[RMDB]
RNA sequence: GGGAACGACUCGAGUAGAGUCGAAAAGGUGGGUAUCUCCGAUGCCAUUGUCAACAAUUUCUUCCUCGCUGGCGGCGAGAUUGGUCAGCACCGCCCAUCAGUCGUACCUCGUGGUACUAUUAGCAGCACGGUACAUCAACUUCGGUUGAUGUACCGUAAAAGAAACAACAACAACAAC
Reactivity to DMS in 0.01 (KOAc 150mM, MgCl2 10mM, bicine 150mM(pH8.5), 24C), signal-to-noise 2, nucleotides 027 to 126: g010g040u010g010g010g020u000a040u000c040u000c060c070g000a180u000g020c020c060a090u000u010g040u020c130a070a070c070a050a060u000u000u000c070u000u010c050c010u000c140g000c090u000g010g010c120g010g000c300g000a040g010a030u010u000g030g000u000c090a060g000c060a060c050c000g000c010c000c040a080u000c100a080g000u000c100g030u000a010c010c010u000c200g010u010g000g000u000a030c000u000a110u000u010a050g010c040a060g020c090
Reactivity to 2A3 in 0.01 (KOAc 150mM, MgCl2 10mM, bicine 150mM(pH8.5), 24C), signal-to-noise 1, nucleotides 027 to 126: g000g020u050g030g000g000u080a020u050c130u020c120c100g020a030u070g000c040c020a060u040u170g090u130c010a030a020c000a100a060u100u080u000c040u120u040c100c010u070c000g000c030u070g240g010c020g050g000c040g000a080g040a050u000u050g000g030u060c020a000g040c010a030c020c010g020c030c020c000a030u130c020a000g080u100c050g000u010a010c000c000u190c070g140u220g000g000u000a000c020u010a080u040u100a070g070c030a030g040c010